[RMDB]
RNA sequence: GGGAACGACUCGAGUAGAGUCGAAAAGAGCGUGGCAAGCCUCACCGAUGCGUUAUCGUAAUCAAGGAUUGUCCAUGUCAUCAGAUGAACACGCGGACGAGUAUUCGCGUUAUAUCGUAGACGGGGCCAUCGCCGCUUGGUUCGCCAAGCGGCGAUGAAAAGAAACAACAACAACAAC
Reactivity to 2A3 in 0.01 (KOAc 150mM, MgCl2 10mM, bicine 150mM(pH8.5), 24C), signal-to-noise 2, nucleotides 027 to 126: g050a000g020c050g060u070g000g000c010a000a000g000c030c000u000c020a050c000c060g030a000u000g010c050g170u190u160a090u210c030g030u030a070a130u030c000a010a010g000g000a030u000u010g050u140c050c000a030u080g010u000c000a030u000c030a030g000a050u010g050a070a020c000a000c050g000c070g050g020a040c090g030a110g140u170a300u100u000c000g020c000g010u000u070a060u050a000u000c050g000u020a010g040a040c000g000g040g000g020c030
Reactivity to DMS in 0.01 (KOAc 150mM, MgCl2 10mM, bicine 150mM(pH8.5), 24C), signal-to-noise 1, nucleotides 027 to 126: g020a060g010c040g020u000g000g040c020a040a170g000c000c010u000c090a000c080c070g000a010u000g030c080g000u140u040a250u000c010g000u000a000a000u000c190a160a030g030g000a040u020u000g050u000c000c000a000u000g000u000c010a110u020c150a000g000a030u000g000a020a140c180a180c000g050c120g000g000a000c030g000a120g000u020a300u000u000c000g000c000g220u000u000a060u040a070u090c000g000u000a270g000a120c000g020g030g080g000c110